[RMDB]
RNA sequence: GGGAACGACUCGAGUAGAGUCGAAAAGUCGACGAUGAUGGCGCUGACAUCGGAGGUGGGCCGCGGCCCAGGCUUCGCGGUUUGGCGGCCUGCGAAGAAGUGGCUCUUCUGACACUUCCGUGGGUGGCCCCUGGUAGCCCUUCGGGGCUACCAGGGGAAAAGAAACAACAACAACAAC
Reactivity to 2A3 in 0.01 (KOAc 150mM, MgCl2 10mM, bicine 150mM(pH8.5), 24C), signal-to-noise 1, nucleotides 027 to 126: g180u020c020g010a050c010g030a070u070g020a030u050g100g050c040g010c020u020g030a060c020a070u020c000g010g010a010g020g080u080g050g000g000c050c000g140c130g120g020c000c000c050a040g000g080c050u050u080c000g080c040g190g010u070u130u300g130g000c020g010g070c000c090u060g020c070g010a050a040g000a040a010g090u050g000g020c000u000c000u300u130c100u130g060a020c000a000c000u010u000c040c000g000u000g050g000g060u020g090g020